[RMDB]
RNA sequence: GGGAACGACUCGAGUAGAGUCGAAAAGGCUGCUAUUGCCGGUAACUGACCAGGAAGUUACCCAGCCGCUCGAUGGCGGCCGCCAGAUCGCGGGACCAUGGCAGCGUCACCAGGCGCAGAUGAUCCGAUGGCACUGUCCAUUCGUGGACAGUGCCAUAAAAGAAACAACAACAACAAC
Reactivity to DMS in 0.01 (KOAc 150mM, MgCl2 10mM, bicine 150mM(pH8.5), 24C), signal-to-noise 1, nucleotides 027 to 126: g040g000c070u000g000c020u000a010u000u000g000c120c060g000g000u000a000a000c000u050g060a300c050c090a100g080g000a280a000g000u000u020a000c000c070c000a240g000c020c080g010c040u020c240g000a080u040g000g000c020g000g040c000c140g010c000c020a040g090a050u010c090g020c040g000g020g080a000c010c030a060u000g000g010c000a060g000c000g060u000c070a220c020c020a110g000g000c000g020c100a040g030a100u060g000a000u010c030c060g000
Reactivity to 2A3 in 0.01 (KOAc 150mM, MgCl2 10mM, bicine 150mM(pH8.5), 24C), signal-to-noise 2, nucleotides 027 to 126: g060g000c000u000g030c030u050a120u300u050g170c230c080g000g000u030a010a010c000u000g040a040c000c190a080g000g150a010a000g000u040u050a000c000c000c000a000g030c000c060g000c000u060c110g120a090u300g000g000c000g130g030c000c000g000c040c000a070g030a170u030c060g020c000g050g020g030a030c030c000a060u010g000g130c100a030g000c090g080u030c000a060c060c030a090g020g000c110g000c010a050g010a150u080g000a080u040c000c000g000